[RMDB]
RNA sequence: GGGAACGACUCGAGUAGAGUCGAAAAGUGUGAAGUGAGUGAGCCACUUACGAGCACGAAUUACAGGGCUCUAUUGACAUUACUGGGCGCCAGGAGCCCUACCUGGACAAGUCUCGAAGAUCGGGCCGCGAUUGAGAGACGACUAUUAACGGCCACAAUUUACGAUAUCAUUCGUGAUAUCGUAAAUAAAAGAAACAACAACAACAAC
Reactivity to 2A3 in 0.01 (KOAc 150mM, MgCl2 10mM, bicine 150mM(pH8.5), 24C), signal-to-noise 6, nucleotides 027 to 156: g020u010g000u010g080a080a010g000u000g000a010g010u030g020a040g110c070c020a020c010u010u000a000c010g010a010g000c000a000c030g020a020a020u160u090a130c090a080g020g000g030c010u010c030u070a190u080u160g060a040c050a080u120u230a150c120u120g040g100g020c070g000c030c020a020g010g010a030g010c000c000c000u010a040c000c000u020g030g010a030c040a130a050g000u000c000u010c010g070a090a020g000a030u020c020g000g110g100c110c020g100c040g030a010u020u090g010a020g000a000g010a030c020g000a000c010u040a060u300u110a080a050c020g000g010c020c000a060c030a020
Reactivity to DMS in 0.01 (KOAc 150mM, MgCl2 10mM, bicine 150mM(pH8.5), 24C), signal-to-noise 3, nucleotides 027 to 156: g020u000g010u000g000a130a190g000u010g030a060g010u000g000a140g010c060c010a100c050u000u000a050c030g020a300g050c000a070c030g040a120a120u000u010a100c100a120g010g040g010c000u000c020u060a110u010u000g000a030c060a110u000u000a230c120u000g000g030g050c060g030c020c010a070g010g010a060g020c010c010c010u000a030c010c000u020g000g000a090c070a070a200g010u010c020u000c030g010a140a120g010a040u000c050g000g020g080c050c060g010c050g020a060u010u000g010a300g000a070g020a070c010g000a040c080u000a120u000u010a070a070c050g010g000c000c000a080c120a120

Structure probing data (2A3 and DMS) for a 207-nucleotide construct. High DMS reactivity at an A or C suggests that its Watson-Crick edge is free. The RNA was probed in 150 mM KOAc, 10 mM MgCl2 and 150 mM bicine (pH 8.5) at 24 C. The DMS profile rests on 5,453 reads. Reactivities are rounded to 0.1 and cut off at 0 and 3. It was measured as part of the RMDB library OK3TST.